Structure probing data (DMS and 2A3) for a 207-nucleotide construct. For DMS, 2,689 sequencing reads were counted. Reactivities are rounded to 0.1 and cut off at 0 and 3. It was measured as part of the RMDB library RNAMAK. Conditions: 150 mM KOAc, 10 mM MgCl2 and 150 mM bicine (pH 8.5), 24 C. For 2A3, 8,190 sequencing reads were counted. DMS adducts were read by reverse transcription with MarathonRT.
RNA sequence: GGGAACGACUCGAGUAGAGUCGAAAAGGCUUACUUCGGUAAGCCAAAAAGGGGUCAGUACGUUGAAAGAAUAGCGAGGAUCUACCUGAAGCCUCCACGGGUAGGGAGCUACUGGAGUACUGACGGAGGCACCCAAAAAGCUGAGUUCGCUCAGCAAACUCACUACUAAGUUCGCUUAGUAGUGAGUAAAAGAAACAACAACAACAAC
Reactivity to DMS in 0.01 (KOAc 150mM, MgCl2 10mM, bicine 150mM(pH8.5), 24C), signal-to-noise 1, nucleotides 027 to 156: g000g060c000u000u000a000c000u000u030c300g070g000u000a010a030g030c020c010a000a010a060a100a000g010g000g050g020u000c000a020g000u000a030c020g010u020u020g030a170a150a090g020a120a110u010a050g040c020g020a090g050g010a060u010c000u000a010c000c000u000g000a030a110g010c000c010u000c000c000a300c040g000g000g000u000a030g000g010g000a070g000c020u000a000c030u000g010g000a170g000u000a010c010u030g010a030c020g000g000a040g080g090c000a110c010c020c020a010a170a130a140a080g030c000u010g010a030g040u000u000c300g040c020u000c030a000g030c000a000a060
Reactivity to 2A3 in 0.01 (KOAc 150mM, MgCl2 10mM, bicine 150mM(pH8.5), 24C), signal-to-noise 5, nucleotides 027 to 156: g000g000c000u010u000a000c010u020u040c140g050g000u010a000a000g000c000c000a000a030a000a000a000g030g000g020g010u000c000a000g010u010a000c060g070u180u230g220a240a230a110g170a200a230u040a060g000c000g010a170g020g010a000u000c000u000a000c000c000u020g020a100a020g000c000c000u010c000c000a010c010g010g020g000u000a000g000g000g000a000g000c000u030a050c140u230g100g040a060g010u000a000c000u000g000a010c030g000g000a000g000g000c000a030c000c010c010a030a100a030a020a010g000c000u010g000a010g010u090u140c180g080c130u000c000a000g000c000a000a020